[RMDB]
RNA sequence: GGGAACGACUCGAGUAGAGUCGAAAACAAUGUGGGAGGUUCGAUCGCCUACGAGAUGGGCGACGUUCUCAAACAAGUAAUCGCGGCUUGUAAACGUGACGAUAUCGUGCCGGAAGUCGACCCCGCCAGAAUCCAUGGUUUUCGAACCAUGGAUUCUAAAAGAAACAACAACAACAAC
Reactivity to DMS in 0.01 (KOAc 150mM, MgCl2 10mM, bicine 150mM(pH8.5), 24C), signal-to-noise 2, nucleotides 027 to 126: c050a080a110u010g000u030g010g010g010a090g000g020u000u000c000g000a160u000c000g000c000c000u000a100c050g010a180g000a300u000g000g000g000c000g000a010c010g000u000u010c010u000c010a120a130a060c050a080a070g000u010a060a060u010c110g020c000g000g010c040u000u010g000u010a070a120a180c090g010u000g000a050c080g000a100u000a120u000c010g000u010g000c000c000g010g020a090a100g000u010c010g000a110c090c010c000c030g040c200c170
Reactivity to 2A3 in 0.01 (KOAc 150mM, MgCl2 10mM, bicine 150mM(pH8.5), 24C), signal-to-noise 2, nucleotides 027 to 126: c030a070a120u120g040u030g080g010g020a010g000g030u080u080c010g020a300u030c010g050c040c000u020a030c130g160a050g040a200u100g010g010g020c010g000a000c010g030u000u000c050u010c000a020a070a010c020a030a040g050u010a050a040u130c040g000c010g040g080c020u080u030g210u300a100a220a050c000g030u000g070a060c060g060a080u050a090u300c050g030u150g050c020c000g010g000a030a020g000u000c000g030a030c040c000c010c000g100c000c000
This 177-nucleotide RNA was probed chemically with DMS and 2A3. The data come from the RNA Mapping Database (RMDB), library OK2TST. Values cover nucleotides 27 to 126. DMS adducts were read by reverse transcription with MarathonRT. Conditions: 150 mM KOAc, 10 mM MgCl2 and 150 mM bicine (pH 8.5), 24 C. For 2A3, 1,322 sequencing reads were counted. 2A3 is a SHAPE reagent: it acylates the 2'-hydroxyl of flexible nucleotides of all four kinds.